Structure probing data (DMS) for a 177-nucleotide construct.
Conditions: 150 mM KOAc, 10 mM MgCl2 and 150 mM bicine (pH 8.5), 24 C.
Reactivities are given for positions 27 through 126.
DMS adducts were read by reverse transcription with MarathonRT.
The DMS profile rests on 673 reads.
[RMDB]
RNA sequence: GGGAACGACUCGAGUAGAGUCGAAAAAGUGCAACAAUAAGGCGGUUAUUUCAUCAGCAGAUCAUGCGGUCAUGGCCCCAUUUUCUGGAGCCAUCAGUAUUAACCGAUUAAAGAGGAGAAAUGGCAGAGAUGGCCAAAGGUUCGCCUUUGGCCAUCUAAAAGAAACAACAACAACAAC
Reactivity to DMS in 0.01 (KOAc 150mM, MgCl2 10mM, bicine 150mM(pH8.5), 24C), signal-to-noise 1, nucleotides 027 to 126: a020g040u010g000c060a070a020c080a100a100u030a060a160g010g010c020g030g000u000u000a020u000u000u000c050a040u010c030a100g030c060a070g000a080u030c180a070u000g040c040g010g000u000c180a030u000g000g030c000c000c000c010a050u010u000u000u030c160u010g030g000a020g010c030c000a010u000c130a090g050u010a060u060u000a070a000c040c010g000a110u010u010a060a150a140g000a120g110g000a170g000a030a050a010u000g030g000c060a110g000